[RMDB]
RNA sequence: GGGAACGACUCGAGUAGAGUCGAAAACGCGUAGGCUUCCCCCGCAAGUCACUGUUAGCCCGCCAAGAAGCGACCCCUCCGGGGCGAGCUGAGCGGCGUGCGGCGGGGUGUCAUCCGUCAGUUCUCCGAUACGCUAAGUGUUCGCACUUAGCGUAUCAAAAGAAACAACAACAACAAC
Reactivity to DMS in 0.01 (KOAc 150mM, MgCl2 10mM, bicine 150mM(pH8.5), 24C), signal-to-noise 1, nucleotides 027 to 126: c090g000c150g050u010a170g000g000c010u010u000c050c000c010c040c020g000c020a020a050g020u000c020a050c020u000g010u030u000a010g030c010c010c000g030c000c010a070a060g000a020a040g030c070g020a230c300c090c130c000u000c080c020g020g030g020g030c010g010a030g010c020u000g010a010g000c070g020g000c020g000u000g010c010g010g000c140g040g000g000g000u010g020u010c010a210u000c100c000g000u000c030a120g000u000u000c000u000c010c300